An RNA of 177 nucleotides, treated with DMS and 2A3 and read out base by base. For DMS the reverse transcriptase was MarathonRT. The reactions ran in a buffer of 150 mM KOAc, 10 mM MgCl2 and 150 mM bicine (pH 8.5), at 24 C.
RNA sequence: GGGAACGACUCGAGUAGAGUCGAAAAAGAGCCGACGAACGUUCCAACCUUCCAACCUUCCAACCUUCCAACCUUCCAACCUUCCAAUCUACUCGAGAGGAGGAGGAGGAGGAGGAGGAGGACAUAAAGAAUAUAAUCGGUUCGCCGAUUAUAUUCUAAAAGAAACAACAACAACAAC
Reactivity to DMS in 0.01 (KOAc 150mM, MgCl2 10mM, bicine 150mM(pH8.5), 24C), signal-to-noise 2, nucleotides 027 to 126: a080g000a100g030c030c000g010a100c040g010a050a170c060g000u010u010c020c020a060a140c070c060u000u000c020c040a100a110c070c030u000u000c000c060a100a130c030c000u000u000c030c040a110a070c070c010u000u000c000c030a080a080c070c010u000u000c010c010a080a190u010c020u020a040c100u000c030g000a040g000a270g010g010a190g010g000a070g020g000a140g100g000a190g000g000a070g000g000a240g000g000a120g010g000a300c300a040u000a050a030
Reactivity to 2A3 in 0.01 (KOAc 150mM, MgCl2 10mM, bicine 150mM(pH8.5), 24C), signal-to-noise 2, nucleotides 027 to 126: a010g100a060g050c030c010g010a030c040g020a160a040c000g040u020u030c030c020a080a070c050c010u070u050c020c010a110a100c030c010u050u000c020c050a150a110c040c000u060u000c020c030a150a130c030c030u080u000c030c040a100a090c030c020u120u000c010c020a040a070u000c010u040a040c040u060c080g040a020g000a010g040g040a030g000g020a050g040g020a050g000g000a030g000g040a030g000g020a020g000g030a020g020g000a000c020a020u300a040a150